Chemical mapping of a 177-nucleotide RNA with 2A3.
It was measured as part of the RMDB library RFM100.
For 2A3 the reverse transcriptase was SuperScript II with manganese.
[RMDB]
RNA sequence: GGGAACGACUCGAGUAGAGUCGAAAAGAAAGAAAGAAAGAGGGUUGGAGAUUCAGUCCCAGAUAAUGCGUACAAAGUCCGACUAUAGGAGGUUUUGUAUGCCUUAUCUGGAAUUGAUCACAACCAAUUUAUGGAUUGCCUUCGGGCAAUCCAUAAAAAAAGAAACAACAACAACAAC
Reactivity to 2A3 in 0.01 (KOAc 150mM, MgCl2 10mM, bicine 150mM(pH8.5), 24C), signal-to-noise 2, nucleotides 027 to 126: g150a020a020a000g110a060a030a000g110a060a090a010g110a100g020g050g000u040u010g060g020a300g010a140u120u060c000a000g010u000c000c050c000a000g000a000u000a000a000u020g000c020g000u000a000c000a000a000a000g100u120c000c000g040a100c130u180a070u180a290g140g000a030g000g000u000u050u020u000g000u010a000u000g000c000c000u000u000a000u000c000u000g020g020a000a000u000u000g000a000u000c000a000c000a000a000c030c000a000a020